Structure probing data (2A3 and DMS) for a 177-nucleotide construct. The reactions ran in a buffer of 150 mM KOAc, 10 mM MgCl2 and 150 mM bicine (pH 8.5), at 24 C. It was measured as part of the RMDB library OK1LIB.

[RMDB]
RNA sequence: GGGAACGACUCGAGUAGAGUCGAAAACUCACUUUCGUCCACGUCAACCGGAUUGCCGGCUGCAUCACGCAGGGUGAGGGUGACUUUCUGCGCACUGGUGCCGUCCGGGACCAGAUUAAGCGACGAAAAUUCCACAGGUAUUCGUACCUGUGGAAUUAAAAGAAACAACAACAACAAC
Reactivity to 2A3 in 0.01 (KOAc 150mM, MgCl2 10mM, bicine 150mM(pH8.5), 24C), signal-to-noise 9, nucleotides 027 to 126: c000u010c020a040c010u010u030u020c000g020u000c010c010a050c050g040u030c030a070a080c050c040g140g100a300u060u220g270c010c000g020g010c010u020g000c020a130u110c030a020c020g020c040a100g020g010g040u110g040a060g030g060g040u120g050a060c000u030u070u020c020u040g000c010g000c020a060c080u050g000g000u080g090c010c020g130u210c080c090g010g000g010a010c000c010a000g000a010u070u090a110a030g020c020g050a030c020g020a070a030
Reactivity to DMS in 0.01 (KOAc 150mM, MgCl2 10mM, bicine 150mM(pH8.5), 24C), signal-to-noise 8, nucleotides 027 to 126: c100u000c030a070c130u000u020u010c020g020u000c000c010a230c120g000u010c070a090a110c090c050g010g010a200u030u030g010c020c010g000g010c030u000g020c300a050u020c110a060c060g020c050a040g010g020g010u010g010a040g000g000g020u010g000a100c040u000u000u020c020u000g010c040g020c260a150c080u000g020g020u000g010c010c020g010u040c120c080g010g000g000a050c020c010a050g000a090u000u030a070a120g010c090g010a060c070g010a040a060